[RMDB]
RNA sequence: GGGAACGACUCGAGUAGAGUCGAAAAGGCAUGAUUGUGACACCCUGUCACGACUGGGUUGAGUAUGAGGAAGACAAACAUGUUUGAGGUGCUAUACGGUAGCCGAAAACGGGCGUUUUCACCGUUACGCUUCCGUGUUAUUCGUAACACGGAAGCGAAAAGAAACAACAACAACAAC
Reactivity to 2A3 in 0.01 (KOAc 150mM, MgCl2 10mM, bicine 150mM(pH8.5), 24C), signal-to-noise 1, nucleotides 027 to 126: g070g030c040a050u010g000a080u120u080g000u050g050a000c000a010c020c010c070u110g010u070c070a010c130g010a030c010u150g020g040g000u030u100g070a030g040u180a040u050g130a070g040g010a070a100g030a060c030a050a100a000c030a040u140g150u110u070u080g050a050g060g020u070g000c010u030a000u030a270c060g160g000u060a010g090c110c010g020a080a000a000a020c060g080g020g040c080g070u020u000u100u000c010a020c020c050g020u020u040a070
Reactivity to DMS in 0.01 (KOAc 150mM, MgCl2 10mM, bicine 150mM(pH8.5), 24C), signal-to-noise 2, nucleotides 027 to 126: g020g000c040a040u010g000a100u000u000g000u000g020a100c080a110c060c090c050u000g000u020c030a070c050g010a050c050u000g020g010g030u000u010g010a110g050u010a050u000g050a160g020g000a100a030g000a020c010a080a080a120c100a030u000g010u000u010u000g010a230g000g020u000g000c070u000a080u000a070c110g030g000u000a000g020c010c020g000a120a020a080a070c060g000g000g000c190g000u000u000u000u000c040a080c000c020g050u010u000a100